Overview: The record gives the reactivity of an RNA of 177 nucleotides to 2A3 and DMS.
RNA sequence: GGGAACGACUCGAGUAGAGUCGAAAAGAAAAGAAAGAAAAGGCUACAGCGACCGGUGAAAGAACAACGAAAAGAACCGCUGAGUAUGCCAUCACCGAAAAGAAAAAGAAAAAGAAAAGAAAAGAAAGGUAAUAAUCGAUUUCGAUCGAUUAUUACCAAAAGAAACAACAACAACAAC
Reactivity to 2A3 in 0.01 (KOAc 150mM, MgCl2 10mM, bicine 150mM(pH8.5), 24C), signal-to-noise 1, nucleotides 027 to 126: g040a070a170a000a000g030a020a170a000g040a000a100a000a000g010g000c010u030a110c000a030g000c000g060a130c010c090g010g040u050g070a170a000a100g000a040a000c020a060a000c020g040a020a180a030a160g040a050a020c020c000g000c010u000g000a010g120u060a000u140g030c000c000a010u050c020a050c020c020g000a010a020a020a030g090a050a060a000a010a000g070a070a110a000a030a000g040a020a150a000a000g040a030a070a010a000g130a000a080a000
Reactivity to DMS in 0.01 (KOAc 150mM, MgCl2 10mM, bicine 150mM(pH8.5), 24C), signal-to-noise 1, nucleotides 027 to 126: g030a080a140a020a100g000a040a070a050g010a170a010a260a000g000g000c060u000a220c070a060g000c020g000a130c280c060g070g000u090g000a120a270a060g000a160a110c070a110a180c220g020a230a040a070a050g010a200a170c120c040g080c020u000g000a070g000u000a040u110g000c000c000a180u060c120a060c010c070g000a000a000a130a060g000a000a100a060a060a020g000a010a030a000a090a040g000a100a020a000a000g020a050a020a110a140g040a070a070a070
The reactions ran in a buffer of 150 mM KOAc, 10 mM MgCl2 and 150 mM bicine (pH 8.5), at 24 C. The 2A3 profile rests on 1,139 reads.